[RMDB]
RNA sequence: GGGAACGACUCGAGUAGAGUCGAAAAGCGCCACUCCAGGUCGAUACCGACCACGUCGUACAUGCGGAACGGCCCCAUGGCGAAACCGAACGCCUGGAGAGCCCGGUCCACCUGGUACGGCAGAGCAUAGUAUGGUGAGUUUCGACUCACCAUACUAAAAAGAAACAACAACAACAAC
Reactivity to DMS in 0.01 (KOAc 150mM, MgCl2 10mM, bicine 150mM(pH8.5), 24C), signal-to-noise 1, nucleotides 027 to 126: g000c190g010c060c030a160c090u010c030c130a120g020g030u010c010g010a240u000a150c220c000g000a020c040c000a210c200g000u000c010g010u010a020c030a030u000g000c040g000g020a080a050c030g010g020c030c060c000c000a020u000g010g070c000g000a070a090a100c230c160g000a120a130c030g000c020c000u010g010g010a090g010a090g020c120c040c030g010g000u000c020c010a030c030c090u000g010g010u000a000c020g000g010c000a160g020a080g030c100a070
Reactivity to 2A3 in 0.01 (KOAc 150mM, MgCl2 10mM, bicine 150mM(pH8.5), 24C), signal-to-noise 3, nucleotides 027 to 126: g070c080g090c020c020a010c020u040c050c030a040g000g020u020c020g030a160u150a300c150c050g000a000c000c020a040c090g010u010c010g010u010a030c010a030u060g010c020g030g000a030a000c010g010g020c030c010c000c000a100u230g010g000c040g070a240a070a030c100c010g080a190a120c010g030c020c010u010g000g030a210g010a010g070c050c060c000g020g000u000c000c000a020c030c050u120g090g030u010a010c000g010g030c020a020g030a010g000c050a100
Source: RMDB library OK2TST, as collected in RNAgym.
Chemical mapping of a 177-nucleotide RNA with DMS and 2A3.
The 2A3 profile rests on 2,482 reads.